[RMDB]
RNA sequence: GGGAACGACUCGAGUAGAGUCGAAAAUUAUUGAGCGUAGAUGUCUCUGUCACGAUACGAGUAAGUGACUCUCGUGUACUACUGGCGAAUGAGACAGAGACAUUAUAUGCUGGUGCCAGUCAAUAAACGAUCUACACUAAUUCGUUAGUGUAGAUCGAAAAGAAACAACAACAACAAC
Reactivity to DMS in 0.01 (KOAc 150mM, MgCl2 10mM, bicine 150mM(pH8.5), 24C), signal-to-noise 7, nucleotides 027 to 126: u000u000a040u000u000g000a020g010c010g030u000a020g000a020u000g000u000c000u000c000u000g010u000c000a130c080g010a140u010a060c010g000a040g010u010a040a090g010u000g010a070c080u000c170u010c150g010u000g010u000a040c040u000a050c030u000g010g010c040g000a090a070u000g010a100g010a020c000a000g000a010g000a010c000a000u000u000a050u000a020u000g010c000u000g000g010u000g010c030c030a110g000u000c050a030a040u000a030a060a200
Reactivity to 2A3 in 0.01 (KOAc 150mM, MgCl2 10mM, bicine 150mM(pH8.5), 24C), signal-to-noise 6, nucleotides 027 to 126: u090u060a030u030u110g080a010g000c010g010u030a030g020a100u000g010u000c000u000c000u010g000u020c010a010c090g060a020u060a100c020g000a020g010u060a130a120g060u070g220a040c000u020c010u020c060g090u080g020u030a060c030u010a010c020u040g160g000c050g070a110a100u160g020a060g000a080c000a010g000a000g000a000c000a000u010u000a030u000a000u040g000c020u010g040g010u040g020c010c000a020g050u060c030a030a090u050a080a070a010
This 177-nucleotide RNA was probed chemically with DMS and 2A3. The DMS profile rests on 15,014 reads. Values cover nucleotides 27 to 126. DMS adducts were read by reverse transcription with MarathonRT. High 2A3 reactivity points to a flexible backbone, as in loops and unpaired stretches.